[RMDB]
Annotation:
Chemical mapping of a 177-nucleotide RNA with DMS.

RNA sequence: GGGAACGACUCGAGUAGAGUCGAAAAGGUGCCCUAUCCGAGACACUGCUGUUUCGGUAGAAAGGCUAAGCACGUCGCAAUGACGUAAGGUGGGACUUUUCCCUACAGUUCGAGCGGUCGAACUAGACACACCCGCUAAGUUCGCUUAGCGGGUGUGAAAAGAAACAACAACAACAAC
Reactivity to DMS in 0.01 (KOAc 150mM, MgCl2 10mM, bicine 150mM(pH8.5), 24C), signal-to-noise 1, nucleotides 027 to 126: g000g010u000g000c000c000c000u000a120u000c010c010g030a020g000a010c000a130c210u030g020c300u000g010u000u010u010c030g020g000u000a000g000a070a130a170g000g000c000u000a020a040g000c110a090c000g030u010c000g000c200a090a100u010g010a010c020g010u010a040a110g000g000u010g010g000g000a060c050u000u000u000u010c000c020c020u000a150c190a010g030u000u000c000g020a020g010c240g020g000u000c020g000a020a020c000u000a070g020a150
The data come from the RNA Mapping Database (RMDB), library VIROID.